Overview
Conditions: 150 mM KOAc, 10 mM MgCl2 and 150 mM bicine (pH 8.5), 24 C. Structure probing data (DMS and 2A3) for a 207-nucleotide construct. The DMS profile rests on 2,499 reads. Source: RMDB library OK3TST, as collected in RNAgym.
RNA sequence: GGGAACGACUCGAGUAGAGUCGAAAAUCGGAAGAGCUGUGUAGACCUUAGUCAUACUGGCAAAAAAAUGCUGGGUGAGAACCAAAGCUAUAGGCCUGAGCGGCACAGGUACAACUGAAGUAGACACCGGCGCAGGUAGCGACACGCGCAUGCGAACUAUCUAACCGAUGUUCGCAUCGGUUAGAUAAAAAGAAACAACAACAACAAC
Reactivity to DMS in 0.01 (KOAc 150mM, MgCl2 10mM, bicine 150mM(pH8.5), 24C), signal-to-noise 1, nucleotides 027 to 156: u010c060g000g020a040a070g020a090g000c010u010g050u020g000u000a160g030a080c040c070u020u000a110g000u000c010a160u010a070c050u030g090g000c010a000a000a010a130a080a130a120u020g010c030u020g000g040g050u010g020a160g010a060a180c040c040a040a080a070g000c050u010a150u000a100g000g000c000c040u000g010a070g060c030g000g000c090a040c040a030g030g000u000a020c020a040a080c080u000g000a070a160g010u000a060g000a080c060a040c050c010g020g010c030g030c040a050g010g010u000a040g000c030g000a070c040a030c060g020c020g000c060a040u020g000c060g000a070a080c070
Reactivity to 2A3 in 0.01 (KOAc 150mM, MgCl2 10mM, bicine 150mM(pH8.5), 24C), signal-to-noise 2, nucleotides 027 to 156: u090c030g040g040a040a000g030a030g020c040u030g000u030g020u040a020g050a070c010c030u050u090a030g020u020c010a020u060a170c050u040g000g000c000a050a050a020a030a040a070a070u080g000c000u050g000g010g020u010g020a060g030a020a030c060c040a100a080a050g000c020u060a000u070a210g090g000c000c010u040g040a030g040c030g020g000c030a020c010a050g020g010u060a080c040a050a020c030u030g020a060a020g030u060a040g030a050c030a010c080c000g050g000c010g020c010a010g070g000u030a020g030c020g100a070c040a030c170g050c010g000c010a010u070g000c010g010a030a030c030